Overview:
Conditions: 150 mM KOAc, 10 mM MgCl2 and 150 mM bicine (pH 8.5), 24 C. An RNA of 177 nucleotides, treated with DMS and read out base by base.

RNA sequence: GGGAACGACUCGAGUAGAGUCGAAAACCAAAAUAUACCCAAAACCAUCAUUGUAAAUACACUUUUUUCAAUGUAUAGCUAGGGUGGAUAUUAAUUGGUUGUGAAAAGAGUUGCUUUUUAGUCAUGAAUUCACAAAAGAGUUCGCUCUUUUGUGAAUAAAAGAAACAACAACAACAAC
Reactivity to DMS in 0.01 (KOAc 150mM, MgCl2 10mM, bicine 150mM(pH8.5), 24C), signal-to-noise 4, nucleotides 027 to 126: c000c000a050a060a110a040u010a070u010a060c000c000c000a020a080a260a270c020c030a000u000c010a000u000u000g010u020a010a020a030u010a110c260a150c200u000u000u000u010u010u000c010a010a000u020g000u050a000u000a030g010c010u000a300g000g000g000u000g030g000a050u000a050u000u010a110a110u010u010g010g000u000u010g000u000g020a060a080a040a080g000a130g000u000u000g000c070u000u010u000u010u010a120g020u010c170a060u010g010a130